Structure probing data (DMS and 2A3) for a 177-nucleotide construct. Conditions: 150 mM KOAc, 10 mM MgCl2 and 150 mM bicine (pH 8.5), 24 C. Source: RMDB libraries RFM100 and RFMREP, as collected in RNAgym. DMS adducts were read by reverse transcription with MarathonRT.
RNA sequence: GGGAACGACUCGAGUAGAGUCGAAAAGAGAGCUUCCUUGAGUCCAUUCACAGGUCGUGAUAUGAUUCAAUUAGCUUCCGACUCAUUCAUCCAAAUACCGAGUCGCCAAAAUUCAAACUAGACUCGUUUCCAACUAUUCAUUCGUGAAUAGUUGGAAAAAAGAAACAACAACAACAAC
Reactivity to DMS in 0.01 (KOAc 150mM, MgCl2 10mM, bicine 150mM(pH8.5), 24C), signal-to-noise 3, nucleotides 027 to 126: g000a190g000a020g000c030u000u000c120c100u000u000g000a010g000u010c000c020a250u010u020c040a010c000a160g010g000u030c170g000u000g060a010u000a090u030g010a000u000u010c000a010a010u020u030a030g000c000u000u030c030c000g000a010c010u000c020a180u020u040c230a110u030c150c170a080a050a240u020a000c020c000g000a000g000u000c000g030c020c000a040a030a080a070u020u010c190a060a080a150c160u020a080g000a020c090u000c110g060u000
Reactivity to 2A3 in 0.01 (KOAc 150mM, MgCl2 10mM, bicine 150mM(pH8.5), 24C), signal-to-noise 7, nucleotides 027 to 126: g140a020g010a000g000c010u010u030c020c000u000u010g000a000g000u000c020c020a020u020u030c000a000c020a080g140g300u220c150g020u030g000a000u010a020u180g010a000u000u010c000a010a010u100u140a020g000c000u020u000c010c000g000a000c000u000c000a090u280u070c040a080u070c110c080a100a110a020u070a030c010c000g000a000g000u000c000g020c000c000a090a060a000a040u200u180c090a040a040a070c090u100a050g050a060c030u010c060g030u000